[RMDB]
RNA sequence: GGGAACGACUCGAGUAGAGUCGAAAAGCAGCGAAGGGAGGCUCAGACUAGUGGGCCAAAAGAUCAAUCCGCAUGGCUUCCGGCUGGGCAUCACCACCGACUGGAAGUCGCGCUGGUAUGCCGACAAGUUACAAGAUACUUUCGAGUAUCUUGUAACAAAAGAAACAACAACAACAAC
Reactivity to 2A3 in 0.01 (KOAc 150mM, MgCl2 10mM, bicine 150mM(pH8.5), 24C), signal-to-noise 8, nucleotides 027 to 126: g030c030a000g010c010g040a100a050g060g020g030a050g020g000c010u000c030a090g060a270c110u170a070g200u070g040g000g000c000c000a010a040a000a020g050a060u130c050a020a060u040c010c020g000c070a060u080g060g000c000u060u010c010c000g040g000c040u100g010g000g020c020a060u060c050a040c020c010a010c020c020g030a040c030u080g100g140a090a030g000u000c000g000c030g000c020u010g000g040u060a030u060g040c010c010g050a070c060a130a050
Reactivity to DMS in 0.01 (KOAc 150mM, MgCl2 10mM, bicine 150mM(pH8.5), 24C), signal-to-noise 9, nucleotides 027 to 126: g010c040a050g010c020g010a090a070g020g010g020a190g010g010c020u000c020a040g010a150c190u010a100g020u010g010g000g000c010c020a030a040a100a090g000a100u010c120a090a120u010c030c020g020c060a100u000g000g010c020u000u000c020c020g020g020c070u000g010g010g010c040a040u000c140a060c040c040a060c040c000g000a020c010u000g010g010a080a090g020u000c000g010c140g020c070u000g010g010u010a020u000g000c020c020g000a090c170a070a120
The record gives the reactivity of an RNA of 177 nucleotides to 2A3 and DMS. Values cover nucleotides 27 to 126. The 2A3 profile rests on 25,672 reads. The data come from the RNA Mapping Database (RMDB), library OK2TRN.